[RMDB]
RNA sequence: GGGAACGACUCGAGUAGAGUCGAAAACUGUCCUGUGUGGAAGUACGUGAGUACUUCACGCUCUACGGGAGUAGAGCCACACAGAUCGUGGAGCGAUGUCUUGGAACUACUCCCGUAGUUCACGUAUCACUCACGUGAUACCAAGACGACAGCCACGGCACGGGCAUUAGUUCGCUAAUGCCCGUGCAAAAGAAACAACAACAACAAC
Reactivity to 2A3 in 0.01 (KOAc 150mM, MgCl2 10mM, bicine 150mM(pH8.5), 24C), signal-to-noise 2, nucleotides 027 to 156: c000u020g000u010c000c000u000g020u000g000u010g050g010a070a070g050u060a010c000g020u030g030a010g030u040a080c030u140u130c050a020c030g060c010u020c020u010a000c000g010g030g000a020g000u000a000g000a000g030c000c000a000c000a000c000a000g010a020u040c010g050u120g140g130a120g150c010g010a000u030g000u010c020u010u000g020g010a050a090c000u000a000c000u010c030c000c000g000u000a000g010u050u080c080a070c040g030u040a060u110c050a020c030u010c030a030c050g000u000g030a000u030a050c000c010a000a000g010a000c000g000a000c000a000g020c050c060a050c030g060